[RMDB]
RNA sequence: GGGAACGACUCGAGUAGAGUCGAAAAGAUAUGGAAUGUGCCGCCGUUUGACGGUGUUCGGAAACGAACACCCGAGGAACUACGGUAACAUUCCUAAGUCAAAGGCUUCAGCUUCGGCUGAAGCCAACAGGGUAAAAUUGUUCGCAAUUUUACCCUGAAAAGAAACAACAACAACAAC
Reactivity to DMS in 0.01 (KOAc 150mM, MgCl2 10mM, bicine 150mM(pH8.5), 24C), signal-to-noise 3, nucleotides 027 to 126: g000a070u000a300u010g010g010a030a010u010g000u000g020c010c020g020c040c130g000u000u010u000g000a300c300g000g000u000g010u000u000c000g020g010a110a060a180c030g000a020a000c000a010c000c010c000g000a190g010g010a030a000c000u000a040c010g000g000u010a020a030c000a010u010u000c000c000u000a040a110g000u000c050a080a160a110g000g010c010u000u000c000a000g000c000u010u010c200g010g000c000u000g000a000a000g000c000c010a000a040
Reactivity to 2A3 in 0.01 (KOAc 150mM, MgCl2 10mM, bicine 150mM(pH8.5), 24C), signal-to-noise 1, nucleotides 027 to 126: g020a030u060a040u110g000g020a000a010u010g000u010g020c040c040g010c050c040g020u040u060u130g040a010c010g000g000u000g010u020u000c020g000g010a040a080a080c030g000a010a000c030a000c010c000c000g030a040g100g140a040a030c030u030a010c010g000g020u120a200a000c010a010u000u010c000c000u000a110a010g030u020c040a100a030a070g010g000c000u000u010c010a000g000c010u080u160c300g020g000c000u030g010a010a010g000c000c000a010a000